[RMDB]
RNA sequence: GGGAACGACUCGAGUAGAGUCGAAAAUACUAGCAUUCGGAUCCAACCCUGGAUGGAUACUCAAAGGUUGGCUGAGUUCCUUCCUCCGGCCUUGGUUCCGAUGCUCCAUCCAAGGCCGGAAACCAAACAACCGUAUAGCUUUCGAGCUAUACGGUUGAAAAGAAACAACAACAACAAC
Reactivity to DMS in 0.01 (KOAc 150mM, MgCl2 10mM, bicine 150mM(pH8.5), 24C), signal-to-noise 3, nucleotides 027 to 126: u030a110c070u000a060g010c030a080u000u010c020g010g020a110u000c090c050a020a150c070c020c030u010g010g020a030u000g010g010a060u020a040c110u010c020a040a070a080g010g010u000u000g010g000c130u000g020a070g000u000u000c000c020u000u000c030c060u010c000c010g010g000c020c010u000u010g000g020u000u000c060c050g000a030u000g000c020u000c090c080a130u000c000c010a010a050g000g000c010c000g010g010a020a040a090c170c140a070a080a190
Reactivity to 2A3 in 0.01 (KOAc 150mM, MgCl2 10mM, bicine 150mM(pH8.5), 24C), signal-to-noise 2, nucleotides 027 to 126: u130a040c060u010a010g000c010a040u090u140c020g060g020a070u060c080c040a030a090c060c010c050u030g030g010a020u030g030g020a080u160a170c000u010c060a070a070a040g110g000u080u070g080g000c040u040g020a010g030u000u010c010c010u040u080c000c030u020c010c000g010g000c010c010u000u000g010g020u070u050c010c010g000a000u030g000c000u020c010c010a030u010c000c000a040a000g020g000c000c000g020g010a020a010a000c040c010a080a040a060
Structure probing data (DMS and 2A3) for a 177-nucleotide construct.
2A3 is a SHAPE reagent: it acylates the 2'-hydroxyl of flexible nucleotides of all four kinds.
Conditions: 150 mM KOAc, 10 mM MgCl2 and 150 mM bicine (pH 8.5), 24 C.